About this RNA:
Conditions: 150 mM KOAc, 10 mM MgCl2 and 150 mM bicine (pH 8.5), 24 C. The record gives the reactivity of an RNA of 207 nucleotides to 2A3. Reactivities are given for positions 27 through 156. The data come from the RNA Mapping Database (RMDB), library RNAMAK. For 2A3 the reverse transcriptase was SuperScript II with manganese.
[RMDB]
RNA sequence: GGGAACGACUCGAGUAGAGUCGAAAACUAUGCCUUCGGGCAUAGAAAAAAACCUUUGUGGUUGACUUCUUUUGACGACGUCACCCUACCCAUUGGGUAGACAAGUCGUCGAUAAGAAGCAACCACUCUGGUAAAAACGGCCAGUUCGCUGGCCGAACGUAUAGCGAUUCUUCGGAAUCGCUAUACGAAAAGAAACAACAACAACAAC
Reactivity to 2A3 in 0.01 (KOAc 150mM, MgCl2 10mM, bicine 150mM(pH8.5), 24C), signal-to-noise 2, nucleotides 027 to 156: c000u000a000u000g010c000c010u100u150c300g060g000g000c000a000u000a010g040a100a060a000a000a000a000a000c020c010u020u010u010g000u010g000g050u060u090g150a300c010u000u000c000u040u020u000u030g010a000c010g030a000c000g020u040c020a010c030c020c000u050a090c000c040c090a230u240u300g040g000g000u090a280g010a010c020a120a030g000u000c000g010u000c010g010a010u060a020a010g000a000a000g000c030a000a000c000c000a000c000u000c000u000g000g000u110a110a130a050a030a000c030g010g000c010c000a020g010u100u130c220g070c080u020g000g000c000c010g010a020a010